An RNA of 177 nucleotides, treated with DMS and read out base by base.
For DMS the reverse transcriptase was MarathonRT.
The RNA was probed in 150 mM KOAc, 10 mM MgCl2 and 150 mM bicine (pH 8.5) at 24 C.
Source: RMDB library OK2TST, as collected in RNAgym.
RNA sequence: GGGAACGACUCGAGUAGAGUCGAAAAUAGCAGCAGCUCCAGGCAGUAGCGAGCCCCCAUACUCCCCACGCAGAGCCCCUGUGCAGUGUGGGAACAGAGAAGGAGACAGGAGGCAGGGAGGGACACACAGCAGGGUAAUGUUCGCAUUACCCUGCUGAAAAGAAACAACAACAACAAC
Reactivity to DMS in 0.01 (KOAc 150mM, MgCl2 10mM, bicine 150mM(pH8.5), 24C), signal-to-noise 1, nucleotides 027 to 126: u000a050g030c050a050g000c030a040g030c000u000c070c010a150g010g020c030a050g010u000a030g040c090g000a040g000c010c030c040c020c010a250u020a130c130u010c040c010c030c010a060c030g020c020a030g000a120g000c010c040c100c070u010g020u000g000c040a040g060u000g030u000g040g000g000a030a070c130a060g010a040g040a150a090g000g000a090g000a040c020a030g000g020a050g010g020c070a010g020g000g030a020g000g000g020a140c090a100c290a070